This 177-nucleotide RNA was probed chemically with 2A3 and DMS. The data come from the RNA Mapping Database (RMDB), library OK1LIB. DMS adducts were read by reverse transcription with MarathonRT. The 2A3 profile rests on 381 reads. 2A3 adducts were read by reverse transcription with SuperScript II with manganese. Values are in units of 0.01, from 0 to 300, in steps of 10.

[RMDB]
RNA sequence: GGGAACGACUCGAGUAGAGUCGAAAAUUCGGUAUAGGACAGAACCUUAAAUAUAGUUGCGUCGCUGGCGACCAUGGUUGCCCAUCUGAAUGCUCGAAAAGGUGACAUGGAACUUGUACGAGCUGUCACUUACGAAACGCUUCGGCGUUUCGUAAGUAAAAGAAACAACAACAACAAC
Reactivity to 2A3 in 0.01 (KOAc 150mM, MgCl2 10mM, bicine 150mM(pH8.5), 24C), signal-to-noise 1, nucleotides 027 to 126: u000u000c000g040g040u080a000u110a230g150g000a040c040a160g070a090a300c000c000u140u140a020a070a000u290a020u020a020g110u170u030g010c000g010u000c060g000c050u040g000g000c040g000a040c000c010a000u090g020g000u020u020g140c000c000c000a010u120c000u050g070a150a020u120g050c000u000c110g090a000a010a000a000g040g140u000g020a070c080a120u080g030g020a050a040c000u070u050g070u000a090c010g000a000g000c000u000g010u000c000
Reactivity to DMS in 0.01 (KOAc 150mM, MgCl2 10mM, bicine 150mM(pH8.5), 24C), signal-to-noise 1, nucleotides 027 to 126: u000u000c030g000g020u030a150u080a120g000g010a030c030a030g000a090a040c020c050u030u000a030a120a040u000a080u030a070g000u000u050g010c080g010u000c030g020c070u000g010g000c030g020a020c030c040a020u030g000g020u000u000g080c060c010c030a060u000c020u050g010a110a090u010g000c000u040c000g000a070a030a190a050g010g020u000g020a100c040a060u040g010g000a070a040c030u020u000g010u030a100c040g000a040g040c050u020g000u000c140